Overview:
Structure probing data (2A3 and DMS) for a 177-nucleotide construct.
[RMDB]
RNA sequence: GGGAACGACUCGAGUAGAGUCGAAAAGAAUGCCACGUACACGCCGGGAUCAACGGCGACGAGCUCGCUGACCAGGCCCGCGCACAUCCCGAUGCCGAACUGUUCGUGCAUCCGGAGUGUGGUUGCGCGCACAAGGAGGCUUCGGCCUCCUUGUGCGAAAAGAAACAACAACAACAAC
Reactivity to 2A3 in 0.01 (KOAc 150mM, MgCl2 10mM, bicine 150mM(pH8.5), 24C), signal-to-noise 1, nucleotides 027 to 126: g050a080a000u070g050c020c010a080c000g000u040a070c060a010c030g060c030c040g020g040g070a130u060c080a020a130c010g020g010c020g010a010c030g030a010g060c080u040c040g000c030u020g060a160c070c010a020g110g000c030c000c000g100c010g010c010a020c000a110u000c000c010c020g040a020u000g020c000c000g020a150a120c150u260g160u300u100c070g110u250g020c020a000u000c000c040g000g020a040g010u070g000u040g000g110u100u110g000c140g000
Reactivity to DMS in 0.01 (KOAc 150mM, MgCl2 10mM, bicine 150mM(pH8.5), 24C), signal-to-noise 2, nucleotides 027 to 126: g010a100a120u000g040c040c020a050c160g060u000a110c170a200c100g000c020c010g000g060g000a110u030c070a080a090c070g000g000c000g040a060c130g010a190g010c010u010c010g000c010u000g020a090c090c040a090g000g000c000c080c040g000c050g000c030a010c030a020u000c050c010c040g000a030u000g030c010c000g010a020a290c300u000g020u000u000c000g000u000g000c010a020u000c040c150g010g000a010g010u000g030u000g030g000u000u000g020c000g020
Values cover nucleotides 27 to 126.
The RNA was probed in 150 mM KOAc, 10 mM MgCl2 and 150 mM bicine (pH 8.5) at 24 C.
It was measured as part of the RMDB library OK2TST.
High DMS reactivity at an A or C suggests that its Watson-Crick edge is free.